[RMDB]
Chemical mapping of a 177-nucleotide RNA with 2A3. For 2A3 the reverse transcriptase was SuperScript II with manganese. The data come from the RNA Mapping Database (RMDB), library OK1LIB.
RNA sequence: GGGAACGACUCGAGUAGAGUCGAAAAAUGAUGGGUCAAGCUUUACUUCUCCAAGAAGUUCCUCUAAAACUUCUUUAGUUAUACUUCCUGGUCUCAGUAUCAUAGGAGUCUCUUCUGUUAAAUCCAACACCCUGAUACCGUUCGCGGUAUCAGGGUGAAAAGAAACAACAACAACAAC
Reactivity to 2A3 in 0.01 (KOAc 150mM, MgCl2 10mM, bicine 150mM(pH8.5), 24C), signal-to-noise 1, nucleotides 027 to 126: a010u180g000a010u000g000g070g020u050c140a080a000g000c010u000u000u090a080c000u060u190c000u030c120c150a000a000g020a010a000g040u050u010c050c000u090c090u130a090a120a080a070c010u150u130c000u000u040u000a100g000u020u010a050u000a040c000u040u000c000c000u030g030g020u030c030u000c100a060g070u080a040u090c050a070u100a000g080g040a000g030u050c000u040c000u150u000c030u010g020u120u110a080a050a070u030c080c000a060a000